[RMDB]
RNA sequence: GGGAACGACUCGAGUAGAGUCGAAAAUCGUUAGUCCGUCCGAUUCUUGAGUACGGAUCACAAUACGUAGUCCACUCGGACCGCAUUGAAUCGGUCCAAAAAAAAGUCUUACUUUUUGUCUUGCGGCCACCCUCAUCAUAUUCGUAUGAUGAGGGUGAAAAGAAACAACAACAACAAC
Reactivity to DMS in 0.01 (KOAc 150mM, MgCl2 10mM, bicine 150mM(pH8.5), 24C), signal-to-noise 4, nucleotides 027 to 126: u010c060g000u000u010a160g000u010c020c010g020u000c070c020g020a110u010u030c080u000u010g010a120g030u030a020c100g000g000a000u010c130a100c120a130a060u030a050c120g000u000a060g000u000c010c020a090c160u030c140g010g010a010c010c010g000c150a290u030u030g000a140a080u020c010g000g000u020c030c020a000a000a020a010a020a000a030a030g010u020c100u020u010a070c030u000u000u020u000u010g010u000c060u000u000g010c050g010g000c090
Reactivity to 2A3 in 0.01 (KOAc 150mM, MgCl2 10mM, bicine 150mM(pH8.5), 24C), signal-to-noise 6, nucleotides 027 to 126: u090c030g010u030u060a030g040u030c010c020g020u060c040c020g040a110u090u100c070u130u240g060a050g020u100a050c050g020g030a010u070c040a020c040a100a180u170a050c050g030u020a020g040u000c000c000a050c070u060c040g030g000a040c010c000g030c070a130u090u270g100a130a100u080c010g020g000u000c000c000a080a020a020a000a000a000a000a010g060u050c080u100u090a160c030u050u130u010u070u040g080u070c040u040u120g010c060g010g010c010